Conditions: 150 mM KOAc, 10 mM MgCl2 and 150 mM bicine (pH 8.5), 24 C.
This 177-nucleotide RNA was probed chemically with DMS.
RNA sequence: GGGAACGACUCGAGUAGAGUCGAAAAGUGCGGAGUGAAAUUCAUAGGUGCCUCGCCAAUUUGGCGGAACGACCCGGUACUCCGCGUAGUCGCGACGUAAACGUUCAGUGUUGGCGUUCAGGCCUCAGAGUACGGGACGAUUCGUCGUCCCGUACUCAAAAGAAACAACAACAACAAC
Reactivity to DMS in 0.01 (KOAc 150mM, MgCl2 10mM, bicine 150mM(pH8.5), 24C), signal-to-noise 1, nucleotides 027 to 126: g070u070g040c000g010g010a030g040u000g000a140a110a080u000u060c120a090u040a090g000g030u000g000c090c010u020c000g000c020c020a070a170u010u000u010g010g000c020g010g000a140a060c120g010a070c080c020c170g000g000u020a000c000u000c000c000g000c000g010u060a000g000u000c060g000c120g000a040c000g000u030a110a070a050c030g000u000u000c110a110g010u000g010u010u040g000g000c060g020u000u000c050a020g040g000c090c020u060c020a250